This 207-nucleotide RNA was probed chemically with 2A3. The RNA was probed in 150 mM KOAc, 10 mM MgCl2 and 150 mM bicine (pH 8.5) at 24 C. Source: RMDB library M2RFPK, as collected in RNAgym.
RNA sequence: GGGAACGACUCGAGUAGAGUCGAAAAUCCACUAUGAAUCUAGUCACUAAAUAAACACAAUUAGCUACUGUGUGUAAUAGUGAGUGUUGAUAACACAAAAUAAUAAUAUAGUUUUGGAAGAUUAUACGCGCCCUUGCUCCGUUCGCGGAGCAAGGAACAUAGUCCGCUAGUUCGCUAGCGGACUAUGAAAAGAAACAACAACAACAAC
Reactivity to 2A3 in 0.01 (KOAc 150mM, MgCl2 10mM, bicine 150mM(pH8.5), 24C), signal-to-noise 2, nucleotides 027 to 156: u010c030c040a030c030u240a290u160g150a030a040u050c050u070a070g120u040c010a030c010u030a000a000a040u050a010a020a000c010a000c020a000a080u100u070a080g070c020u170a120c040u050g000u000g000u000g010u000a000a070u000a020g020u010g020a060g000u000g030u020u150g050a200u170a280a000c000a000c020a020a210a020a020u130a010a060u110a290a140u170a030u030a190g060u020u040u160u110g010g000a040a020g000a130u130u220a110u130a170c070g030c000g110c050c000c000u000u020g000c000u040c020c020g020u030u120c200g000c000g110g000a000g000c000a000a000g010g010a000a000